An RNA of 177 nucleotides, treated with DMS and 2A3 and read out base by base. It was measured as part of the RMDB library TTRDEL. The DMS profile rests on 3,631 reads. For DMS the reverse transcriptase was MarathonRT.
[RMDB]
RNA sequence: GGGAACGACUCGAGUAGAGUCGAAAAAAGGAUAAAGAUAUGGAUGUGUAUCAGCUUGGAUUUAUAUGUACAUCGGAAACGAUGUACUAAGUUGUCAGCUGUAAGCACAUCCUAAGUCAGUGAUGAAUCACACUCAGUAGUUCGCUACUGAGUGUGAAAAAGAAACAACAACAACAAC
Reactivity to DMS in 0.01 (KOAc 150mM, MgCl2 10mM, bicine 150mM(pH8.5), 24C), signal-to-noise 4, nucleotides 027 to 126: a090a050g020g000a110u000a070a120a090g010a040u010a300u000g010g010a010u000g000u000g000u000a300u010c000a000g000c010u000u020g020g000a010u000u000u000a030u010a110u030g000u010a010c000a000u000c020g000g000a080a070a190c000g020a020u000g010u000a000c000u000a020a020g000u000u000g000u020c030a030g000c010u010g010u010a040a190g010c010a010c010a000u000c000c000u000a040a030g000u000c030a060g010u000g010a100u000g000a120a130
Reactivity to 2A3 in 0.01 (KOAc 150mM, MgCl2 10mM, bicine 150mM(pH8.5), 24C), signal-to-noise 3, nucleotides 027 to 126: a020a020g300g000a270u300a150a170a070g060a020u080a060u220g000g000a010u010g010u000g000u020a070u130c010a010g020c000u200u280g070g000a050u220u240u050a150u050a050u230g000u000a000c010a000u000c030g030g040a050a070a020c020g010a000u000g000u020a000c000u010a010a020g040u030u070g180u170c000a010g020c040u000g000u020a130a080g000c010a000c000a000u000c000c000u020a020a010g010u000c040a020g060u070g200a210u150g050a070a070